[RMDB]
RNA sequence: GGGAACGACUCGAGUAGAGUCGAAAAGCUGGUCCGGCUUGGCCCCAGCGAACACUUGACGAACGGUUAGUCCCGUCUUGUGGAUUAGGACGUUCUAGGUCCGGUCUGUCCCCUAGUUCGUCCGAAAACGUAAUUACGAGUUCGCUCGUAAUUACGUAAAAGAAACAACAACAACAAC
Reactivity to 2A3 in 0.01 (KOAc 150mM, MgCl2 10mM, bicine 150mM(pH8.5), 24C), signal-to-noise 9, nucleotides 027 to 126: g010c010u040g060g070u100c060c060g020g070c080u060u150g110g010c000c040c000c000a020g060c020g040a050a010c010a010c010u010u010g010a010c010g020a200a020c040g090g080u150u150a060g120u260c020c050c000g010u010c000u010u020g010u020g030g050a080u050u130a040g000g000a000c000g000u000u000c000u000a010g000g020u070c100c080g040g030u080c120u120g280u290c000c010c000c000u000a000g000u000u000c000g000u000c000c000g010a020a020a000
Reactivity to DMS in 0.01 (KOAc 150mM, MgCl2 10mM, bicine 150mM(pH8.5), 24C), signal-to-noise 8, nucleotides 027 to 126: g010c000u010g010g010u030c080c080g010g000c040u020u020g010g010c060c040c000c100a080g010c100g000a110a100c030a020c010u000u020g010a020c010g010a140a100c120g010g020u040u060a120g010u000c080c030c010g000u010c050u020u000g010u000g000g000a150u020u030a100g020g000a010c010g010u000u000c000u000a010g000g000u030c130c090g010g000u030c130u020g000u030c040c050c010c010u000a000g000u000u000c000g020u010c000c010g010a050a030a110